Chemical mapping of a 207-nucleotide RNA with 2A3.
For 2A3, 1,007 sequencing reads were counted.
RNA sequence: GGGAACGACUCGAGUAGAGUCGAAAAACGGAUGGUACGCCAUCCGACCAUUGGGUAGAAGCGUUCGAUCAGCACCGUGACGGUGCAGAUGGGAAAUUGCCCAUGAUACGCACCAUACGUGGUGCGAAAAAGCCAUCGGUGUUCGCACCGAUGGCAAGGUUGGAUAAGACUUCGGUCUUAUCCAACCAAAAGAAACAACAACAACAAC
Reactivity to 2A3 in 0.01 (KOAc 150mM, MgCl2 10mM, bicine 150mM(pH8.5), 24C), signal-to-noise 2, nucleotides 027 to 156: a000c010g000g010a000u000g010g030u060a030c210g030c000c000a000u000c000c010g010a000c000c010a080u160u130g050g000g000u090a040g020a140a010g070c030g060u120u080c030g100a040u040c000a020g030c000a010c000c030g100u140g150a190c250g020g000u000g000c000a010g000a010u000g020g030g020a040a080a070u040u030g030c000c000c000a000u020g150a070u070a040c020g020c000a000c000c000a010u030a090c240g120u040g050g030u010g000c000g040a020a050a000a000a000g000c000c000a000u010c010g000g000u020g000u000u010c080g060c040a000c000c000g000a000u000g000g000c000a010a000